[RMDB]
RNA sequence: GGGAACGACUCGAGUAGAGUCGAAAAGCCACCUCGUCGGCAGCACCCAGGAAACGAUCGACAUCUUCGCCCAUCUGCUGUCCAGCUUCUACAUGAAUAAACACUUAAAGUGGCUGGUCGAUGUCAAGAUAAUUACUAACUUCGGUUAGUAAUUAUCAAAAGAAACAACAACAACAAC
Reactivity to 2A3 in 0.01 (KOAc 150mM, MgCl2 10mM, bicine 150mM(pH8.5), 24C), signal-to-noise 9, nucleotides 027 to 126: g020c010c000a040c020c060u080c070g110u020c040g030g010c010a010g020c010a040c010c020c020a020g080g040a070a110a020c060g020a060u080c060g010a020c000a030u000c020u080u040c050g030c020c010c000a090u050c040u110g020c010u030g030u010c010c010a010g000c010u040u010c010u060a120c020a130u090g060a090a020u230a170a130a020c070a020c080u080u130a100a070a020g010u010g020g000c000u010g030g000u020c040g030a050u040g050u070c020a010a030
Reactivity to DMS in 0.01 (KOAc 150mM, MgCl2 10mM, bicine 150mM(pH8.5), 24C), signal-to-noise 9, nucleotides 027 to 126: g010c020c020a080c060c050u000c100g020u000c070g000g010c030a060g010c060a100c040c030c030a110g010g010a070a100a110c090g000a050u000c070g010a050c040a040u000c030u000u000c060g010c030c020c020a100u010c080u010g010c050u000g000u000c010c020a050g000c030u000u000c020u000a110c190a070u000g000a060a070u010a090a080a110c140a040c070u000u010a060a100a070g010u000g000g010c010u000g000g010u000c050g000a040u000g010u000c070a090a110
About this RNA:
This 177-nucleotide RNA was probed chemically with 2A3 and DMS. 2A3 adducts were read by reverse transcription with SuperScript II with manganese. DMS adducts were read by reverse transcription with MarathonRT. The RNA was probed in 150 mM KOAc, 10 mM MgCl2 and 150 mM bicine (pH 8.5) at 24 C.